[RMDB]
RNA sequence: GGGAACGACUCGAGUAGAGUCGAAAACAGCGCACGCAACCUCCCUUGUCUGCGCAGACACUGACCUCCGCGGACCCAUCACCAUCGGGCCAAAUGUCAUUAUCCAUCCUCGCGCCACCAUCUACGCUGCUGCCGGGCCAAUAAUGUUAGGGGAAGGUGUUUACGAAGUGUUCGCACUUCGUAAACAAAAAGAAACAACAACAACAAC
Reactivity to 2A3 in 0.01 (KOAc 150mM, MgCl2 10mM, bicine 150mM(pH8.5), 24C), signal-to-noise 2, nucleotides 027 to 156: c070a040g000c030g010c030a050c070g040c010a050a020c000c030u000c010c000c000u000u060g030u000c010u010g010c030g000c050a010g070a050c100a040c070u120g060a090c020c010u090c020c020g020c020g050g030a160c040c000c010a050u060c060a030c030c010a060u140c030g040g020g000c030c000a010a080a050u160g040u080c030a050u040u180a000u090c000c030a060u050c020c020u010c020g060c000g020c040c000a030c000c000a010u010c010u150a020c100g040c030u020g000c000u010g010c020c000g020g000g050c000c030a030a070u240a040a030u100g070u100u060a040g000g000g000g110a020a020g070g000
Reactivity to DMS in 0.01 (KOAc 150mM, MgCl2 10mM, bicine 150mM(pH8.5), 24C), signal-to-noise 1, nucleotides 027 to 156: c050a130g040c040g030c030a140c140g000c030a040a060c070c030u020c000c000c000u000u020g020u000c100u010g030c000g040c050a160g020a100c020a070c020u000g010a050c020c000u000c000c040g010c070g000g000a090c040c000c070a070u000c090a130c030c030a130u000c070g010g020g050c000c020a020a070a030u000g020u000c060a110u000u010a140u000c120c010a120u000c010c010u000c010g000c030g000c020c030a100c040c080a120u000c020u020a070c010g020c010u000g010c040u000g010c000c060g020g040g020c020c010a000a090u000a040a060u000g000u010u000a060g030g010g000g020a060a100g050g040

The record gives the reactivity of an RNA of 207 nucleotides to 2A3 and DMS. For DMS the reverse transcriptase was MarathonRT. The 2A3 profile rests on 1,002 reads. High 2A3 reactivity points to a flexible backbone, as in loops and unpaired stretches. The data come from the RNA Mapping Database (RMDB), library OK3TST.